[RMDB]
RNA sequence: GGGAACGACUCGAGUAGAGUCGAAAAACUUUAAAGCUUAUAUGUUUUAACCCUUUCAACAACUCUAUGAGGUAUGUGAUAUUAUUUUCAUGUUAUAGAUGAGAAAAUGGAAGUUCAGAGUCAUGUCUAAGGUCACACAGGUAGAAGGUAGCAAAGACCACAGAUACCUUUUCGAAGGUAUCUGUGGAAAAGAAACAACAACAACAAC
Reactivity to 2A3 in 0.01 (KOAc 150mM, MgCl2 10mM, bicine 150mM(pH8.5), 24C), signal-to-noise 1, nucleotides 027 to 156: a000c080u180u060u060a050a080a050g040c030u240u080a050u100a060u300g030u020u010u000u110a020a070c000c000c000u000u250u110c110a070a040c000a000a000c050u000c000u120a060u130g020a040g090g000u020a030u060g030u000g000a000u000a120u220u130a180u010u090u010u110c000a010u020g000u030u060a070u020a110g120a020u030g030a020g120a130a060a060a000u080g020g010a070a040g010u030u060c060a020g000a010g070u100c010a040u030g000u000c040u020a090a000g020g000u010c000a000c000a010c010a090g030g000u000a030g000a030a010g050g000u040a010g010c000a010a010a000g060a050